Structure probing data (DMS and 2A3) for a 207-nucleotide construct.
[RMDB]
RNA sequence: GGGAACGACUCGAGUAGAGUCGAAAACACAGGUGAUUCGUCACCUGUGAAAAAACCGUAGGUUCCUACCCAGCGAAGAACUCAUUUCGAAAGAGAUGAGGGAGCUGAGGUACAUGGAACCUAAACGGAAAAAUCUUCGUGUUUCGACACGAAGAAAACAAUGGGUAAUGUUCGCAUUACCCAUUGUAAAAGAAACAACAACAACAAC
Reactivity to DMS in 0.01 (KOAc 150mM, MgCl2 10mM, bicine 150mM(pH8.5), 24C), signal-to-noise 1, nucleotides 027 to 156: c020a000c000a000g060g020u000g020a040u000u000c300g040u000c000a010c020c000u030g000u010g010a000a020a050a070a090a040c000c010g020u010a060g000g070u000u010c000c010u000a060c010c000c010a040g000c010g000a190a150g000a150a190c000u010c000a020u000u000u020c020g030a190a170a220g000a030g020a010u010g000a060g040g020g000a200g030c020u000g000a050g010g000u000a000c080a110u000g020g030a000a010c010c020u000a020a010a100c000g010g050a020a080a060a150a090u000c000u000u000c000g020u010g010u000u000u030c290g020a150c000a000c000g010a000a010g000a030a080a160
Reactivity to 2A3 in 0.01 (KOAc 150mM, MgCl2 10mM, bicine 150mM(pH8.5), 24C), signal-to-noise 2, nucleotides 027 to 156: c010a000c000a010g010g000u030g010a030u080u170c190g050u030c160a000c000c000u000g000u000g000a020a010a000a010a010a000c010c000g010u010a020g010g000u000u010c000c000u000a000c000c000c000a010g010c010g150a300a040g040a050a030c000u000c000a000u030u000u000c020g060a070a060a070g000a020g000a010u010g000a000g000g000g020a010g000c000u000g050a090g070g000u030a030c040a090u120g000g010a000a000c000c000u010a080a080a000c000g030g040a030a090a040a040a090u030c000u000u000c000g000u010g040u000u120u100c210g050a010c000a000c000g000a010a000g000a000a020a000

Reactivities are rounded to 0.1 and cut off at 0 and 3. Conditions: 150 mM KOAc, 10 mM MgCl2 and 150 mM bicine (pH 8.5), 24 C. The data come from the RNA Mapping Database (RMDB), library RNAMAK. For 2A3 the reverse transcriptase was SuperScript II with manganese.